[RMDB]
RNA sequence: GGGAACGACUCGAGUAGAGUCGAAAAGCGGAAAAUGUAAAGAAUGGAAAUAUUUCUCAGGAAAUAUUACCUAUAACCGUUAAAGGAGAAAUAUUCAAUACUGAUGAAAGUCUAAAAUCACAUAUUCACACAGAAGUUAGUUCGCUAACUUCUGUGUAAAAGAAACAACAACAACAAC
Reactivity to 2A3 in 0.01 (KOAc 150mM, MgCl2 10mM, bicine 150mM(pH8.5), 24C), signal-to-noise 5, nucleotides 027 to 126: g030c020g030g090a090a020a030a090u220g070u180a120a160a080g080a100a140u150g000g000a060a040a010u020a000u000u030u000c020u040c070a080g120g050a000a030a010u030a010u050u030a030c000c020u060a070u100a190a110c010c000g030u040u130a100a070a060g120g030a040g030a040a060a020u100a040u040u020c060a060a040u070a190c090u070g050a090u050g050a180a040a010g040u030c030u160a060a090a020a090u110c020a050c020a120u220a120u120u130c010
Reactivity to DMS in 0.01 (KOAc 150mM, MgCl2 10mM, bicine 150mM(pH8.5), 24C), signal-to-noise 2, nucleotides 027 to 126: g000c050g000g040a120a040a100a040u000g010u050a040a080a090g000a170a040u000g000g000a100a030a010u000a000u000u000u000c000u010c190a200g020g000a020a020a010u000a010u000u010a030c030c080u000a170u040a190a160c000c010g000u010u050a110a060a120g010g000a060g010a070a020a120u000a060u000u000c050a020a080u010a030c050u010g040a140u020g010a030a040a060g000u060c050u000a060a020a050a070u000c060a040c180a030u020a050u010u010c040